Description
This 177-nucleotide RNA was probed chemically with DMS and 2A3. For DMS the reverse transcriptase was MarathonRT. For 2A3 the reverse transcriptase was SuperScript II with manganese. For DMS, 1,623 sequencing reads were counted.
RNA sequence: GGGAACGACUCGAGUAGAGUCGAAAAGGCAGUUUGAACAUGUCAUCCAAGUUGAUUUGGCUGAAGAAAGGCUUAAUGGCACAGUACUAUGGUUAGGGGAAAGUGAUGAGCUAUAUCACCCUCAACACUGUCCCUUCUCUUUCGAGAGAAGGGACAGAAAAGAAACAACAACAACAAC
Reactivity to DMS in 0.01 (KOAc 150mM, MgCl2 10mM, bicine 150mM(pH8.5), 24C), signal-to-noise 2, nucleotides 027 to 126: g060g030c000a030g000u000u030u050g010a080a060c080a050u000g000u010c000a010u050c070c020a040a060g030u040u000g000a180u020u000u000g010g010c040u000g030a110a130g000a030a140a110g030g010c030u000u000a070a030u000g020g000c000a060c150a050g060u000a010c220u000a060u000g000g000u010u000a020g030g040g000g000a000a060a080g000u010g000a060u040g000a180g010c040u030a080u050a070u020c230a020c010c050c120u000c130a080a100c210a070
Reactivity to 2A3 in 0.01 (KOAc 150mM, MgCl2 10mM, bicine 150mM(pH8.5), 24C), signal-to-noise 1, nucleotides 027 to 126: g070g050c010a000g000u030u180u210g140a050a060c110a210u150g020u000c000a000u030c060c000a000a040g000u020u140g080a060u010u050u090g070g000c010u020g000a210a060g050a150a300a050g040g000c000u090u080a040a020u080g050g000c060a000c000a070g010u170a010c000u000a000u110g160g020u010u140a000g000g000g000g050a000a290a110g040u000g000a050u010g010a010g270c100u110a060u000a000u290c000a020c000c000c000u100c010a030a000c000a000